[RMDB]
RNA sequence: GGGAACGACUCGAGUAGAGUCGAAAACAGUUACUUGCAAACCCAGCAGGGCUCUUGGCUCCUCAAUGCUCAUUAGCAUCUUAAGUUCACAUAAAUAUAUAUGAGGCUUGUGGAUUCCUCUGGGAAUCCCAGAGGCCCUCAGAGCCAAAGCAAAAUCAAUAACUAAUGCAUUCGUGCAUUAGUUAUUAAAAGAAACAACAACAACAAC
Reactivity to 2A3 in 0.01 (KOAc 150mM, MgCl2 10mM, bicine 150mM(pH8.5), 24C), signal-to-noise 2, nucleotides 027 to 156: c010a060g080u170u220a070c040u050u020g000c020a140a110a070c000c000c020a000g020c030a020g010g030g000c020u060c060u020u020g020g010c000u020c020c020u060c020a020a080u020g020c000u020c040a200u240u160a040g020c000a040u080c040u110u210a160a110g020u240u190c040a020c010a100u270a160a300a030u230a070u060a000u030a070u120g020a040g040g010c020u050u100g070u170g040g020a010u050u040c000c000u040c110u150g040g000g050a050a000u030c030c000c010a120g040a080g130g000c050c010c000u000c010a010g000a000g000c000c000a020a040a000g010c000a000a000a040a150u180c050
Reactivity to DMS in 0.01 (KOAc 150mM, MgCl2 10mM, bicine 150mM(pH8.5), 24C), signal-to-noise 1, nucleotides 027 to 156: c060a140g020u010u000a060c060u010u030g000c030a140a160a240c040c030c010a300g030c130a070g000g000g060c000u000c090u000u000g020g020c010u000c000c020u000c080a070a020u020g030c020u010c170a220u000u000a150g050c020a070u030c050u010u010a090a060g010u000u000c030a050c070a150u010a030a140a130u000a110u010a110u000a080u000g000a070g060g050c000u000u010g050u020g030g000a090u000u000c000c000u010c130u040g000g000g000a070a050u000c000c000c020a070g000a060g040g000c230c010c050u000c000a030g000a030g000c000c060a050a050a110g020c040a070a050a080a070u000c070